[RMDB]
RNA sequence: GGGAACGACUCGAGUAGAGUCGAAAAGAAUCUGUUCGCAGAUUCGCAACGCGUACUACUAUGGAGGGCAAGGGAGAUGUUGCUCCCAAAUAGGAGCACAUCAUCGAUCUUGCCUACCCACCCAUAGUAUCGCCAGAUACUCAUGUUCGCAUGAGAACGUAAAAGAAGGCUUCGGCCUUCUUUUACGAAAAGAAACAACAACAACAAC
Reactivity to DMS in 0.01 (KOAc 150mM, MgCl2 10mM, bicine 150mM(pH8.5), 24C), signal-to-noise 2, nucleotides 027 to 156: g010a060a000u000c000u020g040u010u000c270g060c040a030g000a000u000u010c000g000c170a040a060c130g010c030g010u000a080c190u000a000c020u000a040u000g000g010a210g000g010g010c020a010a010g020g020g000a300g000a010u010g050u010u010g010c000u000c000c000c010a010a120a200u000a030g000g010a010g010c000a030c100a060u010c020a150u000c060g010a300u000c030u000u000g000c020c000u000a010c020c020c050a300c120c000c010a070u000a000g000u020a040u000c010g000c020c070a160g030a270u000a110c020u020c010a000u000g020u000u000c230g040c040a020u000g000a030g000a110a200
Reactivity to 2A3 in 0.01 (KOAc 150mM, MgCl2 10mM, bicine 150mM(pH8.5), 24C), signal-to-noise 3, nucleotides 027 to 156: g010a010a010u020c030u080g020u130u180c300g060c130a000g000a000u020u000c010g020c030a150a100c090g000c000g010u090a090c000u010a010c000u020a010u000g000g010a010g010g000g050c010a000a000g040g030g000a080g000a000u010g050u170u080g000c000u000c020c020c060a130a300a060u300a020g000g000a000g020c000a010c000a050u100c000a040u110c070g040a060u030c000u000u000g040c000c000u000a010c000c000c000a050c000c000c000a000u000a010g010u020a030u300c010g030c040c010a030g020a190u230a160c000u030c010a030u000g020u150u040c220g000c170a010u040g020a000g010a040a050